Conditions: 150 mM KOAc, 10 mM MgCl2 and 150 mM bicine (pH 8.5), 24 C. An RNA of 177 nucleotides, treated with 2A3 and DMS and read out base by base. For 2A3, 1,297 sequencing reads were counted.

[RMDB]
RNA sequence: GGGAACGACUCGAGUAGAGUCGAAAAAUGUUGCACUUGGGGGGCCUAUCAGUGUCGACCCAAUAGAUCUUGGAAAUGAUGUAAGUGCAAUCCAGGAUGCCAUAAACAAGUCAAAGGAGCACUUGGACCCGUAAGGAUGAUUCGUCAUCCUUACGGGAAAAGAAACAACAACAACAAC
Reactivity to 2A3 in 0.01 (KOAc 150mM, MgCl2 10mM, bicine 150mM(pH8.5), 24C), signal-to-noise 2, nucleotides 027 to 126: a000u020g020u020u060g020c010a020c040u010u060g000g000g000g000g000g000c000c000u150a210u140c060a040g030u030g020u150c030g060a170c000c010c010a010a000u080a040g110a010u000c020u020u070g040g030a030a190a090u130g060a020u050g060u210a020a030g050u030g030c000a000a020u000c000c010a010g000g060a040u050g050c030c010a050u110a110a100a020c020a060a050g050u090c040a000a080a170g210g020a150g000c010a000c000u000u010g050g020a030
Reactivity to DMS in 0.01 (KOAc 150mM, MgCl2 10mM, bicine 150mM(pH8.5), 24C), signal-to-noise 3, nucleotides 027 to 126: a090u020g030u000u000g000c050a020c050u010u000g030g020g030g000g000g030c040c050u000a070u010c160a180g010u000g030u000c030g000a120c010c010c000a060a090u000a090g000a030u000c010u010u000g000g010a050a100a100u020g000a050u010g010u000a060a050g020u000g010c010a050a090u010c030c000a060g000g020a070u000g000c040c050a080u000a100a060a130c120a060a060g020u000c090a080a070a100g000g000a150g030c020a030c010u010u000g010g010a220